[RMDB]
RNA sequence: GGGAACGACUCGAGUAGAGUCGAAAAAGAGGCUUCGGCCUCUAGUCAAGCGUACUACGAAAGGGAGAAAUGGUCUCCCCACCCUAAUCCCAAAUAGGAUUAGGAGGACUGCAUUUCAUCGAUCUUUCGUAUCGCAAUCCUCCGAGUUCGCUCGGAAUUAAGUUAGGUCUUUCGAGACCUAACUUAAAAAAGAAACAACAACAACAAC
Reactivity to 2A3 in 0.01 (KOAc 150mM, MgCl2 10mM, bicine 150mM(pH8.5), 24C), signal-to-noise 4, nucleotides 027 to 156: a000g020a020g010g030c040u110u130c300g150g000c000c010u020c010u000a020g050u040c070a070a080g010c020g020u070a070c050u010a000c030g000a000a010a000g020g010g010a020g010a020a030a000u030g030g110u030c060u070c050c010c010c010a090c000c020c000u000a000a000u020c020c030c080a140a270a110u260a090g000g000a000u000u000a000g010g010a020g010g000a010c050u160g070c120a020u000u000u030c130a260u300c030g060a060u020c030u010u010u010c010g000u010a040u260c010g000c000a000a030u030c000c030u020c000c000g000a000g010u030u130c190g090c130u010c000g010g040a010a030
Reactivity to DMS in 0.01 (KOAc 150mM, MgCl2 10mM, bicine 150mM(pH8.5), 24C), signal-to-noise 2, nucleotides 027 to 156: a040g000a000g000g010c010u010u010c300g050g010c000c000u020c010u020a020g030u010c090a120a230g020c000g000u000a060c110u010a030c030g000a030a050a030g020g000g000a050g010a020a040a030u010g010g020u010c020u000c020c010c000c010a090c300c020c000u000a000a010u000c010c000c020a050a170a300u000a100g000g000a030u000u000a020g020g010a020g000g000a030c030u010g010c000a060u010u000u000c010a220u000c130g010a130u000c010u000u010u000c010g030u000a050u000c050g000c000a110a050u000c030c010u000c000c000g010a090g000u000u010c200g000c070u010c040g000g000a100a120